Overview:
This 177-nucleotide RNA was probed chemically with DMS. For DMS, 3,201 sequencing reads were counted.

[RMDB]
RNA sequence: GGGAACGACUCGAGUAGAGUCGAAAAGAUAUGGAAAAAACGACUGGAGAUAACGAAGUCGACGAAGUUUCUCGGAAACGAGAAACAGAGACUUUGGUUAUCGAUGAAAGUCGUUUUUUCCUAAGUCCGAAUUAAUCUACUUCGGUAGAUUAAUUCGAAAAGAAACAACAACAACAAC
Reactivity to DMS in 0.01 (KOAc 150mM, MgCl2 10mM, bicine 150mM(pH8.5), 24C), signal-to-noise 3, nucleotides 027 to 126: g020a070u020a300u000g010g010a000a000a000a000a010a000c010g010a020c000u000g020g000a090g010a020u000a000a000c000g000a010a010g020u000c010g000a230c260g000a100a110g010u000u010u000c000u000c020g010g010a130a100a170c010g000a030g000a010a010a020c000a040g000a150g010a020c000u000u000u000g030g020u000u000a000u000c000g010a100u020g000a080a130a020g000u000c000g010u000u010u000u000u000u000c000c000u010a030a070g020u000c090